[RMDB]
RNA sequence: GGGAACGACUCGAGUAGAGUCGAAAACUGGGUAGUAGAGUAUGUAAAGGCUGUCUCGGUCUCUACUAUCUAACUCACGCACUACUUGUAGACUAGACUGAGAUAGCCUUUAGUCAUAAGUGGUGUAGGAACAGUAAGUAUUCGUACUUGCUGUUCCAAAAGAAACAACAACAACAAC
Reactivity to 2A3 in 0.01 (KOAc 150mM, MgCl2 10mM, bicine 150mM(pH8.5), 24C), signal-to-noise 9, nucleotides 027 to 126: c030u030g010g010g010u010a020g010u010a010g010a010g040u110a040u170g070u080a030a040a040g010g000c010u010g030u040c010u020c050g120g010u000c010u000c020u010a010c000u000a010u010c010u010a050a030c030u050c070a090c070g050c010a020c050u080a010c020u070u030g030u050a050g010a020c050u020a030g010a040c040u040g010a010g000a040u030a000g000c000c000u010u010u000a000g010u000c010a020u010a150a030g040u030g070g020u050g050u080a090
Reactivity to DMS in 0.01 (KOAc 150mM, MgCl2 10mM, bicine 150mM(pH8.5), 24C), signal-to-noise 9, nucleotides 027 to 126: c070u000g000g000g010u000a040g000u010a040g010a080g010u010a030u020g010u010a020a030a020g000g010c000u000g010u000c000u000c010g000g000u000c010u000c030u000a020c000u000a040u020c110u020a040a080c090u010c100a100c150g000c090a050c080u010a040c130u010u010g010u000a020g000a170c280u020a060g000a020c010u000g000a010g000a020u000a000g010c000c000u000u000u000a010g010u030c040a040u010a040a080g020u010g000g010u010g020u010a170
The data come from the RNA Mapping Database (RMDB), library OK1LIB. Chemical mapping of a 177-nucleotide RNA with 2A3 and DMS. The RNA was probed in 150 mM KOAc, 10 mM MgCl2 and 150 mM bicine (pH 8.5) at 24 C. Reactivities are given for positions 27 through 126. For 2A3, 30,015 sequencing reads were counted.